[RMDB]
Source: RMDB library OK1LIB, as collected in RNAgym. Chemical mapping of a 177-nucleotide RNA with 2A3. Values cover nucleotides 27 to 126. For 2A3 the reverse transcriptase was SuperScript II with manganese. For 2A3, 434 sequencing reads were counted.
RNA sequence: GGGAACGACUCGAGUAGAGUCGAAAAGCAGACGGCCUCUAGUCUUGGCUCCCUCGUUCGAUGACCUGAUUAGUGUUAUUGCGUCCACUGAUGGGUGCAGGGGGGACACGACUCUUUAAGCUGAUUCGGGAAGCGCACUAUUCGUAGUGCGCUUCCCAAAAGAAACAACAACAACAAC
Reactivity to 2A3 in 0.01 (KOAc 150mM, MgCl2 10mM, bicine 150mM(pH8.5), 24C), signal-to-noise 1, nucleotides 027 to 126: g000c010a020g060a030c050g070g020c000c100u000c030u030a000g000u040c110u060u010g000g030c000u060c000c010c000u000c020g240u290u080c190g080a070u190g130a000c000c000u110g130a110u030u220a030g000u100g010u010u180a090u150u250g060c050g040u070c030c000a000c000u050g030a000u050g070g000g010u070g000c050a110g040g000g000g000g010g050a020c000a000c000g040a000c000u070c000u090u070u070a010a030g010c000u050g030a150u070u110c030